[RMDB]
RNA sequence: GGGAACGACUCGAGUAGAGUCGAAAAGUAUUGGAAUGUAGGGCUCGAUCAGUGGGCGUAAGCUCAGGUCGAUUGCUCUAAUGGUUUGGUUUGUGACCUGGUUGCUCGCUGAGAGUUGAACCAUUGGCUAAAUAAUUAUAUUCGUAUAAUUAUUUAGAAAAGAAACAACAACAACAAC
Reactivity to 2A3 in 0.01 (KOAc 150mM, MgCl2 10mM, bicine 150mM(pH8.5), 24C), signal-to-noise 2, nucleotides 027 to 126: g030u050a050u220u180g050g020a110a020u140g020u120a050g000g030g010c000u000c000g000a060u000c030a070g140u050g000g000g000c010g010u110a030a020g000c010u000c020a000g000g000u000c000g000a020u010u160g000c000u020c010u010a000a000u050g030g000u020u040u040g050g010u030u040u020g050u040g020a030c040c030u020g000g000u010u010g000c000u000c000g000c060u080g100a000g000a000g130u030u160g030a000a000c000c000a000u010u090g000g000
Reactivity to DMS in 0.01 (KOAc 150mM, MgCl2 10mM, bicine 150mM(pH8.5), 24C), signal-to-noise 2, nucleotides 027 to 126: g000u020a070u020u020g000g010a100a040u010g010u000a020g000g000g000c000u010c000g010a040u010c030a100g040u020g030g010g020c000g010u090a100a090g020c020u000c010a060g020g000u000c000g000a030u010u040g000c010u000c000u000a010a000u030g000g010u000u000u020g000g000u020u020u040g000u000g000a040c030c040u000g000g000u010u010g010c000u000c000g000c180u000g010a150g010a040g020u000u000g010a020a050c000c000a060u030u010g000g000

The data come from the RNA Mapping Database (RMDB), library OK1LIB. This 177-nucleotide RNA was probed chemically with 2A3 and DMS. As a SHAPE reagent, 2A3 marks flexible, mostly unpaired nucleotides at the ribose 2'-OH. For DMS, 4,322 sequencing reads were counted. For 2A3 the reverse transcriptase was SuperScript II with manganese.